[RMDB]
RNA sequence: GGGAACGACUCGAGUAGAGUCGAAAAGUCUAGAGGUUCGCCUCUAGACAAAGAACGCUAAUUCGCUAAGCGAGGCCGCGAGAGGGGCCAUACGCGAAGAAAAAAGAGCCCUGUUCGCAGGGCUCAACACUUUUAAAAUGUUCGCAUUUUAAAAGUGAAAAGAAACAACAACAACAAC
Reactivity to DMS in 0.01 (KOAc 150mM, MgCl2 10mM, bicine 150mM(pH8.5), 24C), signal-to-noise 2, nucleotides 027 to 126: g000u000c000u000a000g000a000g000g030u000u060c280g020c000c000u010c000u000a010g020a000c000a020a070a130g010a160a240c050g010c070u000a080a160u000u010c010g010c050u000a090a130g030c020g010a150g020g020c000c010g020c030g000a210g000a190g000g000g010g020c010c000a080u000a020c190g010c000g000a010a020g030a030a050a060a100a160a160g000a000g010c030c000c000u000g000u010u000c190g020c010a000g000g000g000c000u000c000a010a050
Reactivity to 2A3 in 0.01 (KOAc 150mM, MgCl2 10mM, bicine 150mM(pH8.5), 24C), signal-to-noise 2, nucleotides 027 to 126: g010u010c000u020a000g010a000g030g020u080u080c140g100c090c000u000c000u000a000g000a000c000a000a000a020g000a070a000c040g010c070u020a030a220u060u050c040g010c040u030a000a070g030c020g030a130g000g000c000c000g160c020g230a090g040a030g120g080g010g000c010c030a040u040a040c050g010c000g000a030a000g050a030a130a030a000a000a000g010a010g000c000c000c000u000g020u010u020c110g000c020a000g010g050g000c000u010c020a010a000